[RMDB]
RNA sequence: GGGAACGACUCGAGUAGAGUCGAAAAGGAGCUCGAUGCUAUGUGAUAACUAGCACGUUAGUUAUCACCACUGAAACACGCGCCAGUGAAGUUAUGAUCGCGUGCUCGUAACUUAUAGCAUCGAGAAGAUACGAUUCUGAUUCGUUAGAGUUGUAUCAAAAGAAACAACAACAACAAC
Reactivity to 2A3 in 0.01 (KOAc 150mM, MgCl2 10mM, bicine 150mM(pH8.5), 24C), signal-to-noise 9, nucleotides 027 to 126: g160g020a060g030c000u000c000g000a000u000g000c000u000a000u010g010u000g010a020u010a030a010c000u000a010g050c080a040c220g060u080u010a010g000u000u000a000u000c000a000c010c000a000c000u010g020a060a140a010c060a010c050g090c020g020c040c000a000g000u000g010a020a000g000u010u010a010u020g020a020u060c040g010c060g110u080g010c010u000c000g010u010a000a000c000u010u010a000u000a000g000c000a000u000c000g000a000g000a000a000
Reactivity to DMS in 0.01 (KOAc 150mM, MgCl2 10mM, bicine 150mM(pH8.5), 24C), signal-to-noise 9, nucleotides 027 to 126: g000g000a130g000c000u000c000g010a000u000g000c000u010a000u000g000u000g000a010u000a010a000c000u000a030g010c200a120c250g000u030u000a000g010u000u000a000u000c000a000c000c010a000c000u000g000a100a090a080c060a050c070g010c060g000c160c010a000g000u000g000a020a010g000u000u000a000u000g000a030u020c070g010c090g000u020g000c180u000c010g010u000a000a010c000u000u000a010u000a000g000c000a000u000c000g000a000g000a040a060